An RNA of 177 nucleotides, treated with DMS and 2A3 and read out base by base. The RNA was probed in 150 mM KOAc, 10 mM MgCl2 and 150 mM bicine (pH 8.5) at 24 C. The DMS profile rests on 13,509 reads. The 2A3 profile rests on 5,242 reads.

RNA sequence: GGGAACGACUCGAGUAGAGUCGAAAAUGUGGAGAUGGGGGUCUUGCUCCAUUGCCUGGGCUAGUCUUGAACCCCUUUUUAUUCCUAUAGCAUCCUCGAGGCUGGCCAGGGAAGAGGGUCUCAGGCGGUCUUUAAGUACUUUCGAGUACUUAAAGACAAAAGAAACAACAACAACAAC
Reactivity to DMS in 0.01 (KOAc 150mM, MgCl2 10mM, bicine 150mM(pH8.5), 24C), signal-to-noise 6, nucleotides 027 to 126: u010g020u000g000g010a060g010a070u000g010g000g010g020g000u000c100u000u010g010c030u000c020c030a060u000u010g020c040c040u000g010g010g010c050u000a020g010u000c020u000u000g010a070a200c040c020c010c030u000u000u000u000u000a120u010u000c020c020u000a080u000a080g020c060a070u000c050c050u000c040g010a040g010g000c020u010g000g000c020c030a080g000g000g000a050a060g010a080g010g000g000u010c050u000c080a060g010g020c120g010
Reactivity to 2A3 in 0.01 (KOAc 150mM, MgCl2 10mM, bicine 150mM(pH8.5), 24C), signal-to-noise 3, nucleotides 027 to 126: u150g020u070g040g040a070g010a040u050g010g010g050g000g010u030c030u050u080g030c010u020c020c020a040u040u110g020c000c010u020g010g030g040c030u020a000g000u040c000u030u040g060a080a080c000c000c000c000u040u020u020u030u060a090u070u050c010c000u060a050u040a120g050c020a030u060c000c020u000c030g020a010g010g000c000u020g000g030c000c020a030g010g020g010a030a060g040a040g050g000g040u040c030u020c020a040g060g020c080g100

For 2A3 the reverse transcriptase was SuperScript II with manganese.
Values cover nucleotides 27 to 126.